[RMDB]
RNA sequence: GGGAACGACUCGAGUAGAGUCGAAAAUCUGCCCCGACGUCGCAAAUUGGUCCGACGGCGGAAGCCUACAUCGUCAGUCAUCCGGAUAAAGUGGGAGAGGUCGUGGCAACGUAUUUGGCCGAACAUCGACUCACCGGCUCUUCGGAGCCGGUGAGUCAAAAGAAACAACAACAACAAC
Reactivity to 2A3 in 0.01 (KOAc 150mM, MgCl2 10mM, bicine 150mM(pH8.5), 24C), signal-to-noise 1, nucleotides 027 to 126: u140c000u110g000c000c000c000c000g040a070c000g000u050c000g100c120a070a070a300u300u170g000g080u130c140c040g000a070c000g050g000c000g000g000a020a000g050c000c000u050a050c000a170u190c100g070u050c010a100g100u130c100a170u000c000c000g020g020a050u060a100a260a000g040u000g000g070g000a020g000a040g000g000u020c020g000u060g010g000c040a020a000c140g010u020a050u040u000u020g040g000c010c000g000a000a110c040a100u130c160